RNA sequence: GGGAACGACUCGAGUAGAGUCGAAAAGCAAAGUCCUCGUAGCAUCUUUAGGGAUUACGCGAGGACCAGAACUUUUAACACAAAUGUAAGAAAUUUUACCAAGGAAUCCCUUUACUUAACAGCAUCUAUGACUCUACUACUUCGGUAGUAGAGUCAUAAAAGAAACAACAACAACAAC
Reactivity to 2A3 in 0.01 (KOAc 150mM, MgCl2 10mM, bicine 150mM(pH8.5), 24C), signal-to-noise 3, nucleotides 027 to 126: g020c020a020a030a000g000u000c000c000u000c010g010u010a050g030c140a030u000c010u020u130u180a180g110g030g030a020u000u000a020c000g010c000g010a000g000g000a000c000c000a000g030a040a020c000u080u090u110u210a140a050c080a000c040a100a280a090u080g010u090a050a010g090a110a130a020u140u140u070u060a020c020c040a010a020g050g020a080a120u090c020c000c000u090u040u020a140c050u090u070a160a050c080a020g190c070a110u040c050u030
Reactivity to DMS in 0.01 (KOAc 150mM, MgCl2 10mM, bicine 150mM(pH8.5), 24C), signal-to-noise 1, nucleotides 027 to 126: g060c090a040a220a120g000u000c000c020u000c000g050u050a140g040c190a000u010c000u000u000u000a080g000g000g000a070u000u000a120c090g090c000g000a000g000g000a010c000c000a000g000a150a300c000u000u000u000u000a040a190c110a030c050a060a000a050u000g000u000a000a030g010a000a050a190u030u090u000u000a080c000c080a300a060g000g000a120a070u000c000c000c080u010u030u090a110c200u000u000a000a090c050a090g000c300a080u070c120u000